[RMDB]
RNA sequence: GGGAACGACUCGAGUAGAGUCGAAAAGAUUCGCCGUCGGCAUUUCCCCAGCAGCCAUGACCUACCAGGCUGCGGUGCGGCUCGCCGCACAGGUCAUCCCUCAACGGGCGCGUCCUGCGUCCUUCCAAAAACUGACUAACCUUCGGGUUAGUCAGAAGAAUCCAAAAGGGUUCGCCCUUUUGGAUUCAAAAGAAACAACAACAACAAC
Reactivity to 2A3 in 0.01 (KOAc 150mM, MgCl2 10mM, bicine 150mM(pH8.5), 24C), signal-to-noise 1, nucleotides 027 to 156: g030a050u090u130c060g020c050c050g080u120c110g060g000c060a020u030u040u000c030c000c000c000a040g000c000a000g010c010c010a150u100g010a050c010c010u110a240c040c080a010g000g000c010u000g010c000g010g000u030g000c000g010g000c060u060c160g140c050c000g010c010a030c000a020g000g010u010c010a080u110c020c010c010u130c040a030a050c070g010g010g010c010g010c000g000u200c060c080u110g030c010g010u000c020c000u020u070c030c000a000a060a030a020a080c000u000g000a000c000u000a000a000c000c000u030u050c090g030g000g000u000u000a000g000u000c000a000g000a000a000